[RMDB]
RNA sequence: GGGAACGACUCGAGUAGAGUCGAAAACAGGUAGUCCUCGAUGAAACCCAACUCAUCCCGGAGGGGCACCACGGCCUUGCUCUCGAUGGUGUAGCGGAGAAGGCCCUUGAGGGAAAAGAUCGCCUGCCUUUCCCCAAAUCUUCGGAUUUGGGGAAAGAAAAGAAACAACAACAACAAC
Reactivity to DMS in 0.01 (KOAc 150mM, MgCl2 10mM, bicine 150mM(pH8.5), 24C), signal-to-noise 1, nucleotides 027 to 126: c060a050g010g000u010a090g030u000c000c000u000c080g000a090u010g050a100a120a160c030c000c010a140a110c140u000c030a050u000c010c050c010g010g040a050g000g000g000g080c030a090c110c050a090c220g000g000c000c010u000u000g020c000u010c000u000c050g030a070u010g050g000u000g000u000a090g010c080g010g020a030g040a050a110g000g000c010c000c050u010u010g000a110g030g000g030a100a060a020a110g000a090u000c060g020c030c010u000g000c170
Reactivity to 2A3 in 0.01 (KOAc 150mM, MgCl2 10mM, bicine 150mM(pH8.5), 24C), signal-to-noise 1, nucleotides 027 to 126: c000a000g000g050u060a010g060u020c010c020u020c030g000a010u080g030a020a110a080c000c000c020a030a150c030u010c020a110u050c020c000c040g020g030a020g010g060g020g110c070a040c040c060a050c010g000g000c020c030u040u150g140c010u130c090u110c040g090a090u150g060g170u150g080u170a030g070c040g000g030a020g000a020a040g000g000c020c030c000u020u050g010a060g010g030g010a040a200a030a060g060a040u050c020g000c020c030u020g090c020